[RMDB]
RNA sequence: GGGAACGACUCGAGUAGAGUCGAAAACAUUACGAAUUCAGUCGCAAAUUGUAGAAUUAGCUACUCUACGAUUUAGUGAGCGUUAGUAACGUUGUAAUAUAAUAUAGUCUUUGGAACGAUUAUAUUGGAGCCGCGGACAAGUUCGCUUGUCCGCGAACGUGAUUUUUUGGUUCGCCAAAAAAUCACGAAAAGAAACAACAACAACAAC
Reactivity to 2A3 in 0.01 (KOAc 150mM, MgCl2 10mM, bicine 150mM(pH8.5), 24C), signal-to-noise 1, nucleotides 027 to 156: c010a040u100u180a040c040g020a080a110u230u120c100a080g070u000c050g000c010a000a000a000u000u000g000u000a000g000a000a010u030u050a050g030c060u070a030c020u000c000u000a000c000g010a000u010u010u120a050g020u010g040a110g040c040g020u020u090a020g010u050a120a000c050g010u000u060g040u040a140a070u070a050u030a100a010u010a010u020a010g010u010c030u090u100u230g080g030a100a020c020g000a010u000u020a010u010a000u010u060g050g060a030g110c030c020g000c030g020g020a000c000a000a000g000u050u170c120g010c160u000u010g020u000c000c010g000c000g000a000a010